[RMDB]
RNA sequence: GGGAACGACUCGAGUAGAGUCGAAAAUCCUUCUUCUGUGGUCCCGCCUCUCCCGGUCGGUGAACCCUCUGGGCUUGGGUCUCCUCCCAGGUCCGGAAUCAGUCUCCAUGGCUUCCAUCCUGGGCCUUAAGUUUACAGUUCGCUGUAAACAAAAGAAACAACAACAACAAC
Reactivity to 2A3 in 0.01 (KOAc 150mM, MgCl2 10mM, bicine 150mM(pH8.5), 24C), signal-to-noise 9, nucleotides 027 to 129: u030c010c000u040u060c020u070u020c030u080g130u080g050g020u030c010c010c000g040c010c010u040c010u040c030c060c000g030g020u060c040g020g030u060g060a070a060c010c010c010u010c010u020g010g000g010c000u010u010g020g000g030u060c070u040c100c030u080c000c000c000a000g020g010u010c000c000g000g000a010a020u090c020a020g060u010c010u010c080c040a120u120g030g000c000u110u010c020c010a060u040c010c010u050g010g020g000c000c000u040u070a090a030
Reactivity to DMS in 0.01 (KOAc 150mM, MgCl2 10mM, bicine 150mM(pH8.5), 24C), signal-to-noise 5, nucleotides 027 to 129: u000c000c000u020u030c080u010u010c030u000g050u000g000g000u000c030c010c030g040c010c010u000c050u030c000c000c000g020g030u020c020g000g010u000g000a070a070c030c030c050u010c010u000g000g000g000c020u020u030g000g000g000u030c170u060c130c070u000c020c010c030a060g000g010u030c020c000g000g020a040a050u030c150a110g020u000c000u000c080c070a110u040g020g030c050u010u010c050c000a090u040c000c030u040g000g000g000c080c050u000u000a040a180
Source: RMDB library 15KLIB, as collected in RNAgym. The record gives the reactivity of an RNA of 170 nucleotides to 2A3 and DMS. The 2A3 profile rests on 69,540 reads. For DMS the reverse transcriptase was MarathonRT. For DMS, 76,450 sequencing reads were counted. The RNA was probed in 150 mM KOAc, 10 mM MgCl2 and 150 mM bicine (pH 8.5) at 24 C. For 2A3 the reverse transcriptase was SuperScript II with manganese.